[RMDB]
RNA sequence: GGGAACGACUCGAGUAGAGUCGAAAAUUCCACGCAGGACGCGAACAAGAAGAAGCCGAAGCAACUUGAGGUCGCCGCGCACGAACUGGCGCUCGAUCUCCGCCUCGCUCGAGUAGGUUUCCCCGGGGAUCCCGCUUCGAGCCCUUGCCACCAUACACUUUAUCGUUCAGUUCGCUGAACGAUAAAGAAAAGAAACAACAACAACAAC
Reactivity to 2A3 in 0.01 (KOAc 150mM, MgCl2 10mM, bicine 150mM(pH8.5), 24C), signal-to-noise 3, nucleotides 027 to 156: u050u020c030c010a050c070g100c020a010g070g120a080c040g000c040g060a100a070c100a120a050g160a050a020g050a080a000g110c040c060g050a060a010g060c040a050a050c060u100u080g010a000g010g010u010c000g040c180c090g040c000g010c010a120c260g240a300a130c200u220g080g010c000g000c020u010c020g010a020u000c000u000c010c000g020c000c010u010c010g000c000u000c020g000a000g010u040a070g050g230u020u060u040c000c020c020c020g000g000g020g030a030u070c000c010c010g050c070u030u080c060g070a070g010c060c020c000u030u100g010c020c030a060c020c030a080u120a200c030a020